[RMDB]
RNA sequence: GGGAACGACUCGAGUAGAGUCGAAAAGAUAUGGAUAGGGCCAGGGAGCUGGUGGUCGGAAACGACCAUCAGCAGCUUUGAUCUGGCCUAUCCUAAGUCAAAAGAGAAUUUCUUCGGAAAUUCUCAAGAUAAUGGAUACGUUCGCGUAUCCAUUAUCAAAAGAAACAACAACAACAAC
Reactivity to 2A3 in 0.01 (KOAc 150mM, MgCl2 10mM, bicine 150mM(pH8.5), 24C), signal-to-noise 3, nucleotides 027 to 126: g000a000u000a010u040g010g000a000u010a040g170g100g260c020c010a010g050g100g120a160g010c010u020g030g000u000g010g000u000c000g010g000a000a010a010c010g010a000c010c000a010u010c000a010g000c010a000g000c020u180u300u300g100a100u020c000u000g010g000c000c000u000a000u000c000c000u010a010a000g000u000c000a000a000a170a170g000a000g000a010a010u020u010u010c020u090u190c300g110g020a020a020a020u030u000c010u010c010a000a010
Reactivity to DMS in 0.01 (KOAc 150mM, MgCl2 10mM, bicine 150mM(pH8.5), 24C), signal-to-noise 2, nucleotides 027 to 126: g000a010u000a010u020g010g020a030u010a020g010g010g000c000c000a010g000g000g010a140g040c000u010g010g030u000g000g020u000c000g010g000a000a010a010c020g010a020c000c000a000u000c100a030g030c070a060g010c200u000u020u000g010a190u000c000u010g000g000c010c000u000a000u010c000c000u010a010a100g000u010c000a110a070a140a230g010a020g000a020a000u000u000u000c000u000u000c220g010g000a000a010a020u000u000c000u000c000a040a080